Chemical mapping of a 207-nucleotide RNA with 2A3 and DMS.
DMS adducts were read by reverse transcription with MarathonRT.
The reactions ran in a buffer of 150 mM KOAc, 10 mM MgCl2 and 150 mM bicine (pH 8.5), at 24 C.

RNA sequence: GGGAACGACUCGAGUAGAGUCGAAAAUGCUGUCGUUGACAGCGCCCAACGCUUCACAACCUGGAAGAAGCGCCUGUUAUCAGGACGGUUGAUCCAUUUACCGGUGCAGACCUCUGCAAACACCGGGUUUAACAAGCAUCUUUCGAGAUGCUUGUAACUUUAAAUCUUGCUUCGGCAAGAUUUAAAGAAAAGAAACAACAACAACAAC
Reactivity to 2A3 in 0.01 (KOAc 150mM, MgCl2 10mM, bicine 150mM(pH8.5), 24C), signal-to-noise 2, nucleotides 027 to 156: u190g000c010u000g000u000c060g300u070u300g010a010c000a000g000c000g010c010c000c000a030a020c000g000c000u010u020c030a050c000a150a030c000c000u010g000g000a000a020g000a000a000g000c000g050c000c000u120g030u300u170a190u300c010a000g020g000a020c020g020g000u000u040g020a040u040c040c010a000u030u040u190a100c000c010g030g000u030g030c040a060g060a270c010c140u270c040u170g000c000a070a100a000c060a010c000c000g010g010g000u000u100u000a040a010c000a000a000g000c010a000u000c000u000u120u090c150g190a030g000a000u000g000c000u000u000g000u000a000a000
Reactivity to DMS in 0.01 (KOAc 150mM, MgCl2 10mM, bicine 150mM(pH8.5), 24C), signal-to-noise 1, nucleotides 027 to 156: u010g040c010u000g000u000c000g000u000u000g020a010c030a020g000c000g120c060c060c010a080a060c000g010c010u010u000c010a190c060a080a120c030c000u000g000g030a300a300g000a060a050g010c010g020c060c000u000g010u000u000a170u000c030a060g000g030a080c130g000g030u020u000g000a250u000c070c030a300u020u000u000a130c000c000g000g010u000g000c000a070g000a190c130c100u030c060u000g020c000a190a120a020c000a000c000c000g010g000g000u010u010u000a060a030c010a000a030g000c000a020u000c010u000u000u010c240g030a070g010a000u000g030c000u000u000g010u010a010a100

For 2A3 the reverse transcriptase was SuperScript II with manganese. As a SHAPE reagent, 2A3 marks flexible, mostly unpaired nucleotides at the ribose 2'-OH. DMS (dimethyl sulfate) methylates the pairing face of unpaired adenines and cytosines.